[RMDB]
RNA sequence: GGGAACGACUCGAGUAGAGUCGAAAAGCGUGAGAAUACGAUGAAACAGGGAAACCUGGAAGCUGCCGAUUCCCAGGCCUUGAAGGGGUGUUCUGAUGUCUUUGACAUUCCAGCAAACAUAUUUUCAUCACUAGGCACCUUUCGAGGUGCCUAGUGAAAAAGAAACAACAACAACAAC
Reactivity to DMS in 0.01 (KOAc 150mM, MgCl2 10mM, bicine 150mM(pH8.5), 24C), signal-to-noise 1, nucleotides 027 to 126: g000c040g020u030g000a030g020a030a120u010a050c030g010a090u000g010a080a140a270c020a060g000g000g030a100a120a200c000c000u000g000g000a060a090g010c140u010g030c080c030g040a190u000u000c000c000c000a250g010g020c030c080u000u010g000a120a090g000g010g000g030u000g010u010u010c010u020g000a030u000g000u040c010u000u000u000g000a120c130a090u000u010c030c030a030g010c200a070a100a110c200a080u020a160u020u010u000u020c080a030